RNA sequence: GGGAACGACUCGAGUAGAGUCGAAAAAUGAGACGCGACCGGUGGCAUCACCUCUCGGUUCGUCCCAACCUGCUUUUUGUCUAUCUGAGCCUCUGCCGCGAUCCUCUCUUGAGCCCCUCUGGGGAAUUCUCGAGUUGCCGCAUCAGGCAAGCAAAGAGGUACUACUUAUGUUCGCAUAAGUAGUACCAAAAGAAACAACAACAACAAC
Reactivity to 2A3 in 0.01 (KOAc 150mM, MgCl2 10mM, bicine 150mM(pH8.5), 24C), signal-to-noise 2, nucleotides 027 to 156: a000u090g010a070g000a010c030g010c160g040a010c020c010g000g030u020g010g000c040a150u090c050a120c050c010u040c040u110c000g040g000u030u040c000g010u000c000c000c000a070a090c010c000u090g120c220u170u120u030u100u220g140u070c040u130a130u040c040u050g020a000g010c000c000u020c010u020g010c020c010g040c070g030a040u060c000c010u020c000u050c000u010u030g040a030g020c000c020c000c000u250c120u100g010g000g050g030a030a030u160u000c010u000c000g020a000g030u110u010g080c090c040g010c020a070u070c050a020g000g020c000a000a000g020c010a040a020a010g020a020
Reactivity to DMS in 0.01 (KOAc 150mM, MgCl2 10mM, bicine 150mM(pH8.5), 24C), signal-to-noise 1, nucleotides 027 to 156: a110u000g000a100g000a030c020g000c060g000a020c030c030g040g010u020g020g010c060a250u010c190a160c050c020u000c070u030c000g040g070u000u010c010g000u030c030c000c000a070a270c040c040u010g020c060u000u000u000u000u000g110u000c050u010a260u000c030u000g000a300g000c000c010u010c060u010g080c080c060g020c030g000a090u000c030c010u020c000u000c000u000u020g010a210g020c020c000c010c000u010c120u000g030g050g000g010a030a070u010u030c030u000c010g010a110g020u000u000g010c100c040g000c090a070u020c070a050g050g020c020a030a140g020c080a060a070a070g020a240
Structure probing data (2A3 and DMS) for a 207-nucleotide construct.
The 2A3 profile rests on 1,463 reads.
The RNA was probed in 150 mM KOAc, 10 mM MgCl2 and 150 mM bicine (pH 8.5) at 24 C.
It was measured as part of the RMDB library VIROID.
For DMS, 2,265 sequencing reads were counted.